Record summary
Chemical mapping of a 207-nucleotide RNA with 2A3 and DMS. The RNA was probed in 150 mM KOAc, 10 mM MgCl2 and 150 mM bicine (pH 8.5) at 24 C. Source: RMDB library M2RFPK, as collected in RNAgym.
RNA sequence: GGGAACGACUCGAGUAGAGUCGAAAAUUGCGCCUCCGAUUCGCCGUCGGCAUUUCCCCAGCAGCCAUGGCCUACCAGGCUGCGGUGCGGCUCGCCGCACAGGUCAUCCCUCAUCGGGCGCGUCCUGGAUAGGGCUAUACUUUCGAGUAUAGCCCAAGAUAACAUAUGGUUUCGACCAUAUGUUAUCAAAAGAAACAACAACAACAAC
Reactivity to 2A3 in 0.01 (KOAc 150mM, MgCl2 10mM, bicine 150mM(pH8.5), 24C), signal-to-noise 4, nucleotides 027 to 156: u100u070g010c010g000c010c010u110c030c030g010a050u110u100c060g020c050c040g030u040c010g000g000c050a030u050u060u070c010c000c000c000a020g000c000a010g000c000c020a300u090g030g000c030c010u140a260c050c030a000g000g020c010u010g000c010g000g020u050g000c050g000g010c070u090c120g090c010c000g060c020a030c030a050g030g060u080c060a180u090c070c000c030u100c030a130u080c060g020g010g000c010g000c020g010u030c000c010u030g060g020a100u090a230g010g000g000c000u000a000u000a010c010u070u060u160c250g100a010g000u000a010u010a020g000c030c000c000a000a000
Reactivity to DMS in 0.01 (KOAc 150mM, MgCl2 10mM, bicine 150mM(pH8.5), 24C), signal-to-noise 2, nucleotides 027 to 156: u010u010g010c030g040c020c010u050c030c010g000a080u000u010c120g040c050c050g010u000c040g010g010c050a200u010u000u000c000c010c010c030a130g030c020a050g010c010c010a120u000g020g060c040c070u000a110c030c020a080g010g010c020u000g000c000g000g070u000g040c080g010g000c220u000c210g020c020c070g050c120a050c030a030g020g010u010c070a140u000c020c080c030u010c060a130u010c100g040g000g010c010g020c040g010u000c000c010u020g010g000a230u000a140g010g040g030c010u010a010u000a010c000u000u010u000c220g020a070g040u000a030u000a010g020c000c000c000a000a020